An RNA of 207 nucleotides, treated with DMS and 2A3 and read out base by base. Reactivities are given for positions 27 through 156. For 2A3, 1,441 sequencing reads were counted. Source: RMDB library RNAMAK, as collected in RNAgym. Values are in units of 0.01, from 0 to 300, in steps of 10.
[RMDB]
RNA sequence: GGGAACGACUCGAGUAGAGUCGAAAAGGGGUCUCCGAAGUUAUGGGAGGAUCGAUAAGUACUGAAGCCUCCACGGUACUUUUGACGAUCCGAGGAUCAUAAUGUAGAGACGGAGGCACCCAAAAGUUAAUUUAACCCUUCGGGGUUAAAUUAACAAGAUACAUAAAACCUUCGGGUUUUAUGUAUCAAAAGAAACAACAACAACAAC
Reactivity to DMS in 0.01 (KOAc 150mM, MgCl2 10mM, bicine 150mM(pH8.5), 24C), signal-to-noise 1, nucleotides 027 to 156: g000g000g050g030u000c000u000c000c030g000a120a300g010u000u000a000u010g040g020g000a020g040g040a030u000c000g010a160u010a000a020g010u000a020c010u000g000a020a300g000c020c000u000c030c030a280c010g010g030u000a010c000u000u000u000u000g020a230c110g030a030u000c000c010g040a090g020g000a080u000c000a090u000a020a010u010g010u000a160g000a110g010a150c000g030g010a050g060g050c020a020c000c010c020a060a030a040a210g000u000u010a000a010u000u000u000a000a030c010c000c020u000u010c300g050g020g090g000u000u000a000a000a000u000u010a000a010c010a090a150
Reactivity to 2A3 in 0.01 (KOAc 150mM, MgCl2 10mM, bicine 150mM(pH8.5), 24C), signal-to-noise 2, nucleotides 027 to 156: g030g000g010g000u000c010u010c040c040g090a110a000g030u000u010a010u010g000g000g000a000g010g010a010u000c020g010a080u010a190a000g000u000a000c000u020g070a150a050g030c040c020u040c070c000a010c020g000g000u000a000c020u070u160u140u190g230a100c030g000a000u030c050c030g010a090g000g000a000u000c010a000u010a040a010u100g160u300a110g030a010g000a100c000g000g000a000g000g010c010a140c030c000c000a020a140a010a000g000u000u000a010a010u000u000u000a000a000c010c000c020u040u110c270g030g000g000g000u000u000a000a000a010u000u000a000a000c000a000a000